[RMDB]
RNA sequence: GGGAACGACUCGAGUAGAGUCGAAAAGAUGAUAGUCGCACUGUCCUUAGAGAGUGCAGGAAAGAAUCAUAGUUCUUCGAGUGUCUAAGGACACACUCAAGUGUAUGCACUUGUCCUGGCUAUCAUACAUAGGUGUCGGAUUCGUUUGAUAUCUAUGAAAAGAAACAACAACAACAAC
Reactivity to DMS in 0.01 (KOAc 150mM, MgCl2 10mM, bicine 150mM(pH8.5), 24C), signal-to-noise 9, nucleotides 027 to 126: g010a040u000g000a010u000a010g010u000c010g030c160a090c170u000g000u000c000c050u000u010a020g000a040g010a140g020u030g010c040a100g000g000a080a020a030g000a040a050u020c220a140u050a130g010u010u000c000u000u010c050g010a200g010u020g000u000c010u000a020a030g000g000a020c040a040c170a070c190u010c060a030a010g010u000g000u040a110u040g020c070a020c010u000u000g000u010c120c100u020g000g000c000u000a010u000c000a010u000a110
Reactivity to 2A3 in 0.01 (KOAc 150mM, MgCl2 10mM, bicine 150mM(pH8.5), 24C), signal-to-noise 9, nucleotides 027 to 126: g160a000u020g000a000u000a000g010u010c020g010c060a050c100u050g020u040c000c010u040u040a010g010a000g010a020g080u210g050c050a020g070g060a130a040a020g030a020a010u120c120a150u160a140g130u030u010c000u010u020c030g040a050g080u090g040u010c010u020a020a030g040g010a010c000a000c000a010c020u040c010a010a010g010u010g030u070a120u250g120c010a000c000u020u020g050u070c010c040u020g000g000c000u000a000u000c000a000u010a020